An RNA of 177 nucleotides, treated with DMS and read out base by base. High DMS reactivity at an A or C suggests that its Watson-Crick edge is free. The RNA was probed in 150 mM KOAc, 10 mM MgCl2 and 150 mM bicine (pH 8.5) at 24 C. For DMS, 750 sequencing reads were counted.

RNA sequence: GGGAACGACUCGAGUAGAGUCGAAAAAGAUAUGGACGCGUAACAAGCUGAUGACCCAUGGUAAAACCAUAUCGGAAACGAUAUGGGAGUACGCCAUGGCAAGGCUUGGAGAAGCGUCCUAAGUCAAGGACUUUAACUUCUUCGGAAGUUAAAGUCCAAAAGAAACAACAACAACAAC
Reactivity to DMS in 0.01 (KOAc 150mM, MgCl2 10mM, bicine 150mM(pH8.5), 24C), signal-to-noise 1, nucleotides 027 to 126: a050g030a000u000a270u020g000g040a040c020g000c010g000u000a120a300c010a000a010g000c000u000g010a060u010g000a080c300c000c000a030u000g000g070u030a010a080a240a190c000c000a000u020a000u000c030g000g000a080a050a160c000g000a050u000a010u000g000g000g080a010g050u000a100c300g000c050c000a000u020g000g000c000a100a050g020g000c000u000u010g010g010a030g010a080a200g030c010g000u000c000c010u000a000a090g000u000c040a080a180